[RMDB]
The record gives the reactivity of an RNA of 177 nucleotides to 2A3 and DMS.
2A3 adducts were read by reverse transcription with SuperScript II with manganese.
DMS adducts were read by reverse transcription with MarathonRT.
The data come from the RNA Mapping Database (RMDB), libraries RFM100 and RFMREP.

RNA sequence: GGGAACGACUCGAGUAGAGUCGAAAAUGCGCCGACUGGCGGCCGUUGCGGGGCUUGAAACGCGGGUAGCGCGCACGCCCGGCGAAGAAGUUCGCAUACGCGGUGUGCUGGUGCCGAAGUGUCUGCUAAUAUACCUUCCCUUCGGGGAAGGUAUAUUAAAAGAAACAACAACAACAAC
Reactivity to 2A3 in 0.01 (KOAc 150mM, MgCl2 10mM, bicine 150mM(pH8.5), 24C), signal-to-noise 2, nucleotides 027 to 126: u080g000c020g020c010c000g030a070c080u100g050g030c000g010g010c050c010g020u030u030g030c070g010g020g030g000c020u000u100g030a090a050a040c040g010c020g010g050g000u060a030g080c020g000c010g000c040a010c010g010c000c020c000g010g010c020g000a020a000g030a040a000g150u030u000c000g000c020a020u090a290c060g010c090g010g020u060g030u010g030c000u040g030g030u030g020c010c020g000a090a050g010u000g050u020c030u020g040c000u000
Reactivity to DMS in 0.01 (KOAc 150mM, MgCl2 10mM, bicine 150mM(pH8.5), 24C), signal-to-noise 4, nucleotides 027 to 126: u020g010c020g040c010c000g020a120c090u020g010g000c030g010g000c070c030g000u020u010g010c050g030g030g000g000c030u000u000g000a130a080a110c130g040c030g000g010g020u010a040g000c050g060c120g000c020a040c050g000c020c000c000g000g030c000g000a050a020g000a120a080g000u000u010c000g010c020a060u000a300c080g010c050g020g030u000g010u010g020c020u000g000g010u000g000c030c030g000a040a110g000u000g010u020c020u000g010c300u000